[RMDB]
RNA sequence: GGGAACGACUCGAGUAGAGUCGAAAAUAGCUGAGCCAGUCAGUGGUAAUACUGGUGUAAGCGUGUAGGGCGUGACCUAGGCAAAUCCGGGUCACAUUCAGCCUGAGACGUGAUGCGUAGCCGAUUGAGUAGUAAGCAGGUUCGCCUGCUUACUACUAAAAGAAACAACAACAACAAC
Reactivity to DMS in 0.01 (KOAc 150mM, MgCl2 10mM, bicine 150mM(pH8.5), 24C), signal-to-noise 5, nucleotides 027 to 126: u020a150g020c010u000g010a270g010c000c020a010g010u000c140a070g040u010g020g020u000a070a090u020a020c010u000g000g010u000g010u010a130a300g000c000g020u020g010u010a300g000g000g030c000g020u000g000a000c010c000u000a050g060g000c230a080a110a120u060c010c010g000g000g000u000c000a030c020a040u020u000c300a170g000c000c000u000g000a190g000a030c010g020u000g000a120u020g010c080g040u020a110g000c040c020g010a090u020u020g010
Reactivity to 2A3 in 0.01 (KOAc 150mM, MgCl2 10mM, bicine 150mM(pH8.5), 24C), signal-to-noise 4, nucleotides 027 to 126: u120a010g010c000u010g000a000g010c000c000a000g010u060c020a040g050u080g160g080u290a150a060u030a090c000u000g000g020u040g070u040a030a020g000c010g000u000g000u030a010g000g020g000c040g010u010g010a000c020c020u100a220g010g020c180a150a070a030u160c000c010g000g000g000u010c000a000c020a000u100u210c060a020g000c000c000u030g000a040g000a010c010g000u030g010a050u130g010c040g030u070a030g010c070c020g100a150u030u170g070